Structure probing data (2A3) for a 177-nucleotide construct. 2A3 is a SHAPE reagent: it acylates the 2'-hydroxyl of flexible nucleotides of all four kinds. 2A3 adducts were read by reverse transcription with SuperScript II with manganese. Reactivities are rounded to 0.1 and cut off at 0 and 3. The reactions ran in a buffer of 150 mM KOAc, 10 mM MgCl2 and 150 mM bicine (pH 8.5), at 24 C. The data come from the RNA Mapping Database (RMDB), library OK1LIB.

RNA sequence: GGGAACGACUCGAGUAGAGUCGAAAACAACGCUUUUAUCCUUAACCAAAAGAUAUAAGGUCCUGCUCAAUUGUCUUUCAAGGCUCUUCAUAUCAUUUGACCUAUCUGCUUCCGUUAUCCUGUCGUACGAGUACUGCCGGUUCGCCGGCAGUACUCGAAAAGAAACAACAACAACAAC
Reactivity to 2A3 in 0.01 (KOAc 150mM, MgCl2 10mM, bicine 150mM(pH8.5), 24C), signal-to-noise 1, nucleotides 027 to 126: c150a020a020c070g060c000u000u000u000u000a040u260c050c000u060u060a110a160c020c000a250a000a000a110g080a000u060a000u000a160a000g060g000u060c000c000u050g050c060u030c010a170a230u040u180g070u000c020u000u050u050c090a090a090g110g000c040u000c000u220u040c060a010u010a060u140c070a120u110u000u100g060a040c020c000u010a010u000c000u040g010c050u030u010c010c000g000u010u000a040u020c030c000u050g050u100c010g000u040a000